[RMDB]
RNA sequence: GGGAACGACUCGAGUAGAGUCGAAAAAUGACAGGUGGCGGGACUCCCCCAGGGCCACACCAUGGGACCAGGUCAGCUAUGUCAGCCAGGUGUCGCUGUCCUCCCUGACGUCCGACAAGCCAUCUCGAGCGAAAUUUCUAUUCGUAGAAAUUUCGCUAAAAGAAACAACAACAACAAC
Reactivity to DMS in 0.01 (KOAc 150mM, MgCl2 10mM, bicine 150mM(pH8.5), 24C), signal-to-noise 2, nucleotides 027 to 126: a170u010g010a060c140a040g020g000u000g020g000c030g010g000g010a050c010u010c080c030c090c130c060a070g040g010g040c080c080a110c100a080c100c210a080u000g000g020g000a070c170c190a060g030g000u000c100a100g000c010u010a020u000g020u010c010a110g000c170c120a070g020g000u030g020u010c130g030c010u020g000u000c020c030u010c030c010c010u000g000a070c120g010u010c000c000g000a190c050a120a090g000c020c040a070u000c000u000c100g000